The record gives the reactivity of an RNA of 207 nucleotides to 2A3. The reactions ran in a buffer of 150 mM KOAc, 10 mM MgCl2 and 150 mM bicine (pH 8.5), at 24 C. The 2A3 profile rests on 461 reads.
[RMDB]
RNA sequence: GGGAACGACUCGAGUAGAGUCGAAAAUUGCCGAUCGGUAUGGAUGCCACCGUGACGGCUCAAUCACACAAGUGCCAACGAUAACGAGGCGCUCGCAAUUGCUGCGUAACUGACGGCCUGACGGUCUAAAACAGAUUCGUGUUCGCACGAAUCUGAACAUAGCUACGCGGUUCGCCGCGUAGCUAUGAAAAGAAACAACAACAACAAC
Reactivity to 2A3 in 0.01 (KOAc 150mM, MgCl2 10mM, bicine 150mM(pH8.5), 24C), signal-to-noise 1, nucleotides 027 to 156: u070u060g000c010c000g030a050u000c050g020g020u070a050u130g040g000a030u050g090c050c010a020c020c020g000u020g030a070c100g000g050c020u030c070a020a130u110c010a050c010a050c020a240a000g000u030g070c050c000a080a230c110g110a170u130a120a150c100g000a020g030g000c010g020c020u140c050g040c000a050a080u110u190g050c080u000g000c000g060u070a090a040c040u010g050a030c040g030g030c010c010u070g060a140c050g020g000u000c050u090a070a090a050a000c000a020g000a000u000u000c000g010u020g040u000u080c190g150c150a010c010g010a000a000u000c000u000g000a010a020